[RMDB]
RNA sequence: GGGAACGACUCGAGUAGAGUCGAAAAACAAGGAAAACCCUUUUCUUCUUGAGCAAUUUUAUUCAGCUUGACAAAGAUACUUUCAGAUAUCGAUGAUAUAGUUAUAAGGGUUAACUAUGAAAGGAACCUUUUAGCGCUACUUCGGUAGCGCUAAAAGAAAAGAAACAACAACAACAAC
Reactivity to 2A3 in 0.01 (KOAc 150mM, MgCl2 10mM, bicine 150mM(pH8.5), 24C), signal-to-noise 2, nucleotides 027 to 126: a000c030a000a060g090g000a080a020a030a130c000c000c000u030u000u000u000c110u130u000c020u110u160g010a000g030c010a110a160u160u090u120u210a280u110u300c020a030g000c020u030u000g000a050c050a020a090a050g060a000u060a080c080u140u300u150c060a050g090a140u070a030u050c070g020a000u060g030a010u020a000u060a210g080u160u010a020u070a140a000g000g020g000u000u000a000a000c010u090a010u240g110a010a060a200g110g000a020a030c000
Reactivity to DMS in 0.01 (KOAc 150mM, MgCl2 10mM, bicine 150mM(pH8.5), 24C), signal-to-noise 1, nucleotides 027 to 126: a100c050a050a110g000g000a010a130a080a070c030c000c000u000u000u000u000c040u000u000c300u000u000g000a000g000c020a130a020u030u000u000u120a210u080u020c130a090g040c020u010u000g000a140c040a000a030a190g000a000u000a000c030u000u050u000c220a070g060a120u000a020u020c030g000a240u000g000a160u040a030u000a000g000u050u000a000u020a000a020g000g000g000u000u000a090a150c010u000a030u000g000a060a030a030g000g000a140a190c070

The record gives the reactivity of an RNA of 177 nucleotides to 2A3 and DMS. Values cover nucleotides 27 to 126. The DMS profile rests on 996 reads. For DMS the reverse transcriptase was MarathonRT.